This 177-nucleotide RNA was probed chemically with DMS and 2A3.
2A3 adducts were read by reverse transcription with SuperScript II with manganese.
The RNA was probed in 150 mM KOAc, 10 mM MgCl2 and 150 mM bicine (pH 8.5) at 24 C.
It was measured as part of the RMDB library M2PK90.
Values are in units of 0.01, from 0 to 300, in steps of 10.
RNA sequence: GGGAACGACUCGAGUAGAGUCGAAAAGUGUCGGACUCGCAAGUGCGAAUAUAUUUUAUCCCUAAACAGGGAGUGGAAAGCUCGUCCUGGAGUGGAAAACACGUCCAUCCCAAAGCGAGAAAUGAAAGUGAUAGCUAGGAUUCGUCCUAGCUAUCACAAAAGAAACAACAACAACAAC
Reactivity to DMS in 0.01 (KOAc 150mM, MgCl2 10mM, bicine 150mM(pH8.5), 24C), signal-to-noise 2, nucleotides 027 to 126: g030u000g020u000c060g020g040a120c030u000c060g020c060a130a110g010u000g000c040g000a030a070u000a070u000a050u020u000u000u000a180u010c000c000c010u010a070a090a160c250a040g000g000g000a020g010u000g010g000a060a070a080g000c060u000c020g000u000c090c110u000g010g000a030g030u000g010g000a050a100a040a060c170a060c090g000u010c050c060a070u000c000c000c000a060a070a090g000c050g000a030g000a080a080a120u000g020a040a090a120
Reactivity to 2A3 in 0.01 (KOAc 150mM, MgCl2 10mM, bicine 150mM(pH8.5), 24C), signal-to-noise 2, nucleotides 027 to 126: g060u050g040u030c000g020g040a030c020u010c030g090c130a110a010g030u060g090c000g040a080a000u080a000u000a070u070u110u050u100a080u020c000c000c000u050a120a170a040c090a070g010g020g000a000g020u120g010g110a120a120a010g000c000u020c010g030u060c010c010u000g020g000a020g000u070g000g060a020a040a090a040c030a030c050g060u000c010c020a060u000c000c000c030a070a000a000g090c080g000a040g100a110a110a030u200g040a090a140a010